[RMDB]
RNA sequence: GGGAACGACUCGAGUAGAGUCGAAAAGGGCCCGUAAACGGCGGGGGUAACUAUGACCCUCUUAAGGUAGCGUAAUACCUUGCCGCUUAAUUGGCGGCUUGCAUGAACGGAUUAACGACUCCCCCACACACUGUAUGCGGUUCGCCGCAUACAGUGUAAAAGAAACAACAACAACAAC
Reactivity to 2A3 in 0.01 (KOAc 150mM, MgCl2 10mM, bicine 150mM(pH8.5), 24C), signal-to-noise 5, nucleotides 027 to 126: g020g010g030c000c000c000g010u030a060a070a030c050g040g000c000g010g000g000g000g000u030a040a050c060u130a180u300g110a040c000c000c000u010c000u010u100a020a010g010g010u000a010g040c130g180u150a080a050u020a080c000c010u010u040g000c000c000g010c040u090u070a170a070u210u170g020g000c000g010g010c000u010u060g040c050a080u130g050a120a020c020g010g050a070u110u130a110a010c030g100a100c030u040c010c000c000c010c000a010c000
Reactivity to DMS in 0.01 (KOAc 150mM, MgCl2 10mM, bicine 150mM(pH8.5), 24C), signal-to-noise 2, nucleotides 027 to 126: g000g010g000c140c020c020g000u010a020a080a180c070g000g010c010g030g000g000g000g020u000a020a110c300u020a130u040g020a020c030c020c000u000c000u030u010a050a020g010g020u030a010g060c270g010u010a130a040u000a060c020c010u010u000g020c020c000g000c020u000u010a100a190u040u000g000g000c030g000g000c030u000u040g000c020a010u010g000a090a070c070g000g020a130u020u000a120a140c080g000a090c110u040c000c000c000c000c010a150c140
The data come from the RNA Mapping Database (RMDB), library RFM100. Structure probing data (2A3 and DMS) for a 177-nucleotide construct. For 2A3, 3,631 sequencing reads were counted. 2A3 adducts were read by reverse transcription with SuperScript II with manganese. Conditions: 150 mM KOAc, 10 mM MgCl2 and 150 mM bicine (pH 8.5), 24 C.